RNA sequence: GGGAACGACUCGAGUAGAGUCGAAAAGGUUCUUCUUCGACUCGGUCCGGCUCAUCCCGGCAAGAGGCGGCAGUCCUCAGUGCUCUUACUCUUUCCUAUAAAGAGGAGACUGCUGGACUCGCCGCCCAAGCCUGGGAUGGGCCAAAUCCGAGCGAAGCCUCCCAAAAUAGUUCGCUAUUUUGGGAGGAAAAGAAACAACAACAACAAC
Reactivity to 2A3 in 0.01 (KOAc 150mM, MgCl2 10mM, bicine 150mM(pH8.5), 24C), signal-to-noise 2, nucleotides 027 to 156: g110g000u020u010c010u080u000c040u010u000c060g180a270c020u010c000g020g010u020c020c060g000g000c000u000c000a000u010c000c020c020g010g020c030a060a070g090a120g100g000c000g010g000c000a020g020u010c000c000u010c010a030g030u110g230c020u060c050u130u270a300c000u070c020u030u010u100c060c110u190a170u270a300a030a000g010a000g000g000a020g000a000c020u020g090c140u010g000g000a020c000u010c070g000c000c020g000c000c000c000a000a000g000c010c000u100g000g000g000a000u000g010g000g010c000c000a000a000a000u000c000c000g010a000g000c000g000a000a000g000